[RMDB]
RNA sequence: GGGAACGACUCGAGUAGAGUCGAAAACGAUCCUCGAGAGAGGAUCGACGAGUCUUCGGACUCGAUUACCGCGUUGAUGUGCCGCGGGGCUACGAUGGUAUUGUGGGAAAGAAUACCAUUGUACCUUCUUGUCGUAGCCGAACAACUAGCACGUCGAAUGACCCGAUUAGUUCGCUAAUCGGGUCAUAAAAGAAACAACAACAACAAC
Reactivity to DMS in 0.01 (KOAc 150mM, MgCl2 10mM, bicine 150mM(pH8.5), 24C), signal-to-noise 1, nucleotides 027 to 156: c030g010a010u000c000c000u000c000g010a300g010a300g030a080g030g020a000u000c010g010a060c020g000a030g000u000c010u000u000c300g010g000a050c000u020c030g040a050u010u000a160c020c010g040c120g000u000u010g010a040u000g060u000g010c050c020g040c010g000g030g030g020c000u010a000c000g000a110u000g030g010u010a010u020u000g050u000g000g000g020a140a070a300g000a210a160u010a000c010c000a010u020u000g000u010a000c000c020u030u000c100u010u010g040u000c010g000u000a060g010c000c010g040a050a110c050a080a020c120u010a060g020c000a030c010g020u010c010g000a120
Reactivity to 2A3 in 0.01 (KOAc 150mM, MgCl2 10mM, bicine 150mM(pH8.5), 24C), signal-to-noise 5, nucleotides 027 to 156: c010g000a010u010c010c000u000c000g060a070g010a030g000a000g030g000a000u000c000g010a010c000g000a000g000u000c000u020u120c210g100g000a010c000u000c010g010a040u120u180a080c010c000g000c020g010u010u140g010a000u010g000u000g000c000c000g010c020g000g020g040g000c000u010a000c000g000a010u110g010g000u000a010u020u020g000u010g000g010g030a070a230a090g130a100a070u080a090c000c000a000u000u020g010u000a000c000c010u150u190c130u090u260g040u040c010g000u000a000g000c000c010g010a040a040c040a040a060c050u060a000g000c000a000c000g020u000c000g010a040
The data come from the RNA Mapping Database (RMDB), library OK3TST. Structure probing data (DMS and 2A3) for a 207-nucleotide construct. The RNA was probed in 150 mM KOAc, 10 mM MgCl2 and 150 mM bicine (pH 8.5) at 24 C. For 2A3, 4,354 sequencing reads were counted. For DMS, 1,913 sequencing reads were counted. For DMS the reverse transcriptase was MarathonRT. For 2A3 the reverse transcriptase was SuperScript II with manganese.